RNA sequence: GGGAACGACUCGAGUAGAGUCGAAAAGCUAGAUAGCCUUAUAUCAGAGGCCGAAACUCGAGGUAUUACAGGUUAUAACCCCUUAGCCGGUCCCCUCCGUGUCCAAGCCAACAAUCCACAACAACAACACUCUCAUCAUUUUCGAAUGAUGAGAGUGAAAAGAAACAACAACAACAAC
Reactivity to 2A3 in 0.01 (KOAc 150mM, MgCl2 10mM, bicine 150mM(pH8.5), 24C), signal-to-noise 8, nucleotides 027 to 126: g070c050u080a040g030a190u080a020g030c000c010u080u060a060u020a030u110c040a040g040a040g140g090c110c100g110a150a080a030c020u010c010g050a140g010g020u030a040u040u170a080c100a050g030g000u070u050a080u070a160a130c020c000c000c000u040u080a020g020c010c010g030g030u060c030c000c000c000u010c010c010g030u020g010u010c010c000a030a010g030c010c010a010a030c010a030a070u040c020c020a050c030a130a050c010a040a000c010a020a020
Reactivity to DMS in 0.01 (KOAc 150mM, MgCl2 10mM, bicine 150mM(pH8.5), 24C), signal-to-noise 4, nucleotides 027 to 126: g020c050u000a020g050a060u000a030g000c020c020u000u000a050u010a060u030c060a240g000a030g000g020c050c130g010a050a110a120c030u000c000g000a130g000g000u000a010u030u030a050c160a060g020g040u000u000a010u020a070a060c080c030c010c090u010u010a090g020c000c010g040g020u000c030c000c000c020u020c010c020g020u010g000u010c010c050a040a050g000c030c050a040a070c060a020a070u030c030c050a050c100a060a010c140a040a060c160a050a120